This 207-nucleotide RNA was probed chemically with 2A3. It was measured as part of the RMDB library OK3TST.

[RMDB]
RNA sequence: GGGAACGACUCGAGUAGAGUCGAAAAAUGCACAGUCACUAAACAAGAGCGAGAACAAGUCAAACACGAGUAUGACAUUAAACUCACACUCUAUCCACAAAAUUAUCCUGACUGGACACUACCAAUCGUCUCGAUCGGCACACUCAUCGCAACACUCCGUCUUUCGCACUUUCGAGUGCGAAAGACGAAAAGAAACAACAACAACAAC
Reactivity to 2A3 in 0.01 (KOAc 150mM, MgCl2 10mM, bicine 150mM(pH8.5), 24C), signal-to-noise 2, nucleotides 027 to 156: a010u060g000c040a060c030a010g010u100c000a030c180u130a110a270a000c070a120a060g040a010g000c040g090a020g030a000a040c070a150a040g040u030c050a100a000a000c120a060c110g040a030g010u060a080u030g010a000c030a070u100u110a020a080a030c020u010c010a090c000a010c020u000c000u000a060u090c060c060a080c060a030a020a080a140u190u070a060u040c020c030u010g040a000c010u000g080g000a010c050a000c070u070a070c010c040a050a030u110c060g040u000c020u000c020g040a070u000c040g020g000c030a040c020a010c050u060c030a030u150c050g020c030a000a120c000a000c050u090c000
Description
Reactivities are rounded to 0.1 and cut off at 0 and 3.